[RMDB]
RNA sequence: GGGAACGACUCGAGUAGAGUCGAAAAGAUAUGGACAUGAACUACAGCGCAAUGAGUCGUUGAAAUCGGAAACGAUGGAGACUUGACGCUGCAUGUCCUAAGUCAAACGCGAUGUUCGCAUCGCGAACUACCGUUCAGACUUCGGUCUGAACGGUAGAAAAGAAACAACAACAACAAC
Reactivity to DMS in 0.01 (KOAc 150mM, MgCl2 10mM, bicine 150mM(pH8.5), 24C), signal-to-noise 2, nucleotides 027 to 126: g000a060u000a300u010g020g000a010c000a000u010g010a110a090c100u000a300c020a000g000c020g030c150a290a140u000g010a010g000u000c000g020u000u000g010a000a120a020u010c000g020g000a100a150a110c010g000a010u010g000g000a150g000a030c000u000u000g010a080c020g000c000u020g000c000a000u000g010u000c000c000u000a020a060g010u000c050a050a020a260c000g000c000g000a000u000g000u000u000c190g010c010a020u000c030g030c000g000a080a110
Reactivity to 2A3 in 0.01 (KOAc 150mM, MgCl2 10mM, bicine 150mM(pH8.5), 24C), signal-to-noise 2, nucleotides 027 to 126: g040a030u080a050u180g000g010a030c000a000u000g010a180a080c080u150a090c280a000g000c010g020c080a130a230u300g030a020g010u030c020g180u300u070g000a060a040a000u030c040g000g030a040a020a080c020g010a020u030g010g000a000g010a000c000u000u010g060a030c000g050c000u000g000c000a010u010g010u000c000c000u010a100a020g080u030c050a130a050a090c020g000c000g030a000u020g020u110u090c300g000c130a000u010c000g010c010g000a030a000
Structure probing data (DMS and 2A3) for a 177-nucleotide construct. The reactions ran in a buffer of 150 mM KOAc, 10 mM MgCl2 and 150 mM bicine (pH 8.5), at 24 C. DMS (dimethyl sulfate) methylates the pairing face of unpaired adenines and cytosines. It was measured as part of the RMDB library TTRDEL. Reactivities are given for positions 27 through 126.